[RMDB]
RNA sequence: GGGAACGACUCGAGUAGAGUCGAAAAUGAUAGUACAAUUGAGUUAAUAUCAUUAACUUGGAGCGGUUCACCCUCAUUCUUAAUAAAGACAAAGUCACCCGAAUGGGGCUUUCUUCUUCCUUUAGAGACCGUCUUUAGAAUUCGUUCUAAAGACGGUAAAAGAAACAACAACAACAAC
Reactivity to DMS in 0.01 (KOAc 150mM, MgCl2 10mM, bicine 150mM(pH8.5), 24C), signal-to-noise 2, nucleotides 027 to 126: u000g010a020u000a020g000u020a040c050a140a100u020u040g000a150g000u030u010a070a060u000a010u010c000a000u000u000a060a170c060u020u030g020g020a090g020c060g000g000u020u010c040a090c070c010c020u000c030a070u040u000c030u020u000a020a090u020a080a070a070g020a050c300a050a040a080g000u000c100a130c070c140c090g000a020a040u010g010g040g010g030c060u000u000u020c050u000u030c020u000u000c020c070u000u050u040a060g030a080g030
Reactivity to 2A3 in 0.01 (KOAc 150mM, MgCl2 10mM, bicine 150mM(pH8.5), 24C), signal-to-noise 7, nucleotides 027 to 126: u030g010a020u040a020g140u120a080c090a160a190u230u250g110a080g050u100u090a070a060u030a060u070c030a010u020u020a030a010c020u040u070g070g010a030g030c040g060g000u060u060c040a140c020c020c000u010c010a090u140u000c030u060u160a150a130u070a130a140a010g020a010c070a050a090a010g020u060c030a090c100c040c060g070a070a110u240g000g010g040g000c010u040u030u000c020u020u010c010u040u040c020c020u080u110u080a070g020a020g020
About this RNA
An RNA of 177 nucleotides, treated with DMS and 2A3 and read out base by base. The DMS profile rests on 2,538 reads. The data come from the RNA Mapping Database (RMDB), library OK1LIB. Reactivities are given for positions 27 through 126.